[RMDB]
Conditions: 150 mM KOAc, 10 mM MgCl2 and 150 mM bicine (pH 8.5), 24 C. The record gives the reactivity of an RNA of 207 nucleotides to 2A3 and DMS. Reactivities are given for positions 27 through 156. For 2A3 the reverse transcriptase was SuperScript II with manganese. It was measured as part of the RMDB library OK3TST. DMS (dimethyl sulfate) methylates the pairing face of unpaired adenines and cytosines.
RNA sequence: GGGAACGACUCGAGUAGAGUCGAAAAUCAGGUUAUGCUGGUGGCGAUAUCGAUAAUCCAACAUAUAAACAAGUCUGUUCAGGAACGACGGAUCAUGCCGAGGUUGUGCAGAUUGAGUAUGACCCAACGAAAAUUGAAUACAGUGAAUUACUGGAAGGCUGUACCUUUAGUUCGCUAAAGGUACAGCAAAAGAAACAACAACAACAAC
Reactivity to 2A3 in 0.01 (KOAc 150mM, MgCl2 10mM, bicine 150mM(pH8.5), 24C), signal-to-noise 2, nucleotides 027 to 156: u060c000a000g030g060u020u060a060u070g000c000u030g010g010u000g030g000c090g030a080u020a030u090c040g050a020u060a140a040u160c050c050a020a060c100a040u110a000u110a100a080a050c050a130a020g030u000c040u050g040u030u080c050a020g010g060a130a050c030g050a010c040g060g000a000u020c040a070u140g040c020c010g060a010g000g040u040u110g020u040g080c000a030g000a040u060u100g040a060g060u040a030u030g080a080c000c000c010a030a020c070g200a020a080a030a100u130u190g060a060a040u160a040c040a000g010u020g070a060a090u200u060a060c040u010g020g080a050a050g120
Reactivity to DMS in 0.01 (KOAc 150mM, MgCl2 10mM, bicine 150mM(pH8.5), 24C), signal-to-noise 1, nucleotides 027 to 156: u000c000a210g030g000u030u000a040u000g040c050u020g000g050u000g010g010c030g020a090u010a000u010c040g070a170u000a050a300u010c000c020a090a080c010a140u000a050u030a120a090a140c020a080a110g020u010c010u020g000u000u030c020a100g020g000a060a080c060g000a150c130g000g010a100u050c080a070u020g050c030c010g040a130g020g000u000u020g080u000g000c120a080g000a260u000u030g000a070g010u030a060u000g010a090c030c020c000a030a170c070g000a010a060a050a110u000u000g020a110a210u000a080c010a060g010u010g010a070a080u000u000a020c030u020g020g000a140a080g010